RNA sequence: GGGAACGACUCGAGUAGAGUCGAAAAAGAACUGCAAACGAUAAUAAUCUCUAUGUUGGUGCCCCAGCUUUAGCUGCCGCUUAAUCCUACGAGGAUUGAAGGUGUGACGGGCAACAGACCCGGAAAAACGUAUUACGUCGUUCGCGACGUAAUACGUAAAAGAAACAACAACAACAAC
Reactivity to 2A3 in 0.01 (KOAc 150mM, MgCl2 10mM, bicine 150mM(pH8.5), 24C), signal-to-noise 1, nucleotides 027 to 126: a060g040a070a010c000u040g000c010a150a000a000c070g050a010u080a170a030u140a080a130u100c010u000c010u070a100u110g040u030u110g090g000u060g000c000c000c000c000a030g000c040u090u140u110a020g040c000u010g000c000c000g050c000u030u000a010a000u010c000c000u040a070c300g030a080g120g000a000u000u030g050a100a060g010g000u080g000u030g060a010c010g070g020g000c000a030a000c050a020g100a080c000c010c000g020g000a110a010a000a000
Reactivity to DMS in 0.01 (KOAc 150mM, MgCl2 10mM, bicine 150mM(pH8.5), 24C), signal-to-noise 3, nucleotides 027 to 126: a020g010a130a050c040u020g010c070a060a090a110c140g040a040u010a120a130u010a130a100u000c020u010c070u030a100u040g000u010u000g000g010u020g000c040c000c010c040a050g010c050u010u010u010a100g000c010u010g000c020c010g030c150u020u010a020a000u010c010c000u000a140c160g030a140g010g020a010u030u000g000a060a080g000g040u000g020u020g000a110c050g000g000g000c010a080a050c220a080g000a100c010c000c010g020g020a070a040a040a030
The record gives the reactivity of an RNA of 177 nucleotides to 2A3 and DMS.
2A3 is a SHAPE reagent: it acylates the 2'-hydroxyl of flexible nucleotides of all four kinds.
The RNA was probed in 150 mM KOAc, 10 mM MgCl2 and 150 mM bicine (pH 8.5) at 24 C.